An RNA of 177 nucleotides, treated with 2A3 and DMS and read out base by base. For 2A3 the reverse transcriptase was SuperScript II with manganese. DMS adducts were read by reverse transcription with MarathonRT.
RNA sequence: GGGAACGACUCGAGUAGAGUCGAAAAGAGGCCGCGCUGGCCGACAAGAAGGCAUUUGCCGGUGCCGCGGGUGACCAGGUCGAUGAUGUGGUCGCGAUGGUGGACGCGCUGGUGAGCCGUUACCCGGUAGUAGCAGACAUUUCGAUGUCUGCUACUAAAAAGAAACAACAACAACAAC
Reactivity to 2A3 in 0.01 (KOAc 150mM, MgCl2 10mM, bicine 150mM(pH8.5), 24C), signal-to-noise 1, nucleotides 027 to 126: g110a030g050g000c020c030g050c090g060c200u190g020g000c020c000g000a010c000a020a060g110a020a060g040g000c040a130u040u010u300g030c000c030g020g010u040g000c010c010g040c000g020g050g030u030g010a010c000c000a030g000g050u060c100g090a230u280g010a020u040g120u030g300g000u000c010g000c020g000a130u120g150g270u100g030g080a060c070g000c000g000c020u030g020g020u070g020a020g000c000c010g010u060u080a150c000c020c000g000g040
Reactivity to DMS in 0.01 (KOAc 150mM, MgCl2 10mM, bicine 150mM(pH8.5), 24C), signal-to-noise 3, nucleotides 027 to 126: g000a240g000g020c030c000g030c130g010c130u020g030g000c000c010g000a040c140a080a110g020a150a170g030g020c050a160u000u000u000g010c030c030g020g010u000g010c040c000g010c030g020g000g020u000g020a010c010c000a050g010g010u000c020g000a180u000g010a040u000g000u000g010g000u000c020g010c030g000a090u010g000g030u000g010g020a160c070g020c040g010c000u000g020g010u000g000a190g030c000c010g010u000u000a050c020c000c000g010g000